[RMDB]
Chemical mapping of a 207-nucleotide RNA with 2A3.
The RNA was probed in 150 mM KOAc, 10 mM MgCl2 and 150 mM bicine (pH 8.5) at 24 C.
It was measured as part of the RMDB library OK3TST.
High 2A3 reactivity points to a flexible backbone, as in loops and unpaired stretches.
For 2A3, 1,189 sequencing reads were counted.
RNA sequence: GGGAACGACUCGAGUAGAGUCGAAAAACACUGGAGGCUUUGUUGCUGCUAUCGUGCUUACCAUUAUGGCUAUUUUGGCUUUUCUUGGCUAUUGGAUUCAGUCCAUAAGACUUUUUAAGCGCUGCGCAUCUUUCUGGGCUUUUAACCCUGAGAGUAAGAUUAGUGAUGUCUUCGGACAUCACUAAUCAAAAGAAACAACAACAACAAC
Reactivity to 2A3 in 0.01 (KOAc 150mM, MgCl2 10mM, bicine 150mM(pH8.5), 24C), signal-to-noise 3, nucleotides 027 to 156: a000c040a050c060u080g020g000a060g020g020c080u130u090u030g040u030u040g000c020u010g000c010u040a030u240c110g030u040g030c000u040u040a080c020c030a120u050u040a040u060g010g000c010u040a080u070u110u140u060g000g000c000u030u040u100u090c070u110u040g040g000c000u010a030u080u130g020g000a070u170u080c090a040g070u030c010c010a030u020a090a020g100a120c010u150u240u050u060u280a060a040g020c030g010c050u030g010c060g020c080a010u010c010u060u040u050c040u010g010g010g000c030u190u180u110u150a070a070c020c000c000u010g040a040g020a000g050u040a150a030